[RMDB]
RNA sequence: GGGAACGACUCGAGUAGAGUCGAAAAAACUCAGCUAGGGAGAGUAUAACAUUCAUGUUGACGAGACCUAGACGAAACACAGAGGAAUAUUAUUAAUCACUGGAUAGUAUUAGUAAUGACUCUGUGUAAAACUCUUCUACGUUCGCGUAGAAGAGAACACAAAAGUAAACUUCGGUUUACUUUUGUGAAAAGAAACAACAACAACAAC
Reactivity to DMS in 0.01 (KOAc 150mM, MgCl2 10mM, bicine 150mM(pH8.5), 24C), signal-to-noise 2, nucleotides 027 to 156: a110a100c030u010c000a100g030c010u000a000g010g010g020a140g010a170g010u010a050u000a030a070c030a120u010u020c150a000u000g020u010u010g010a140c000g010a300g010a070c010c000u000a000g010a300c060g020a110a100a030c010a000c010a020g010a020g020g010a180a110u000a060u000u010a040u010u010a010a000u000c070a070c030u000g040g010a220u030a170g010u000a010u000u000a010g020u010a000a030u010g010a240c000u000c000u000g030u010g000u010a000a020a040a140c010u000c010u000u000c000u000a000c020g060u010u030c300g030c000g030u010a000g010a020a010g000a030g040a050a090
Reactivity to 2A3 in 0.01 (KOAc 150mM, MgCl2 10mM, bicine 150mM(pH8.5), 24C), signal-to-noise 4, nucleotides 027 to 156: a010a000c020u010c000a010g010c000u010a000g020g040g000a060g000a030g070u100a120u080a300a030c050a030u120u210c100a080u280g030u020u020g020a040c020g010a010g050a060c000c000u000a030g000a010c010g000a010a060a000c000a000c000a000g000a010g040g060a200a050u070a010u090u010a000u000u000a000a000u030c030a000c030u040g080g090a150u300a300g000u030a020u000u000a000g000u000a000a000u070g090a060c000u000c000u010g000u000g000u000a000a000a000a000c000u010c000u000u000c000u000a000c000g040u040u040c180g000c000g100u000a000g000a000a000g000a000g000a010a010
Structure probing data (DMS and 2A3) for a 207-nucleotide construct.
It was measured as part of the RMDB library M2RFPK.
2A3 adducts were read by reverse transcription with SuperScript II with manganese.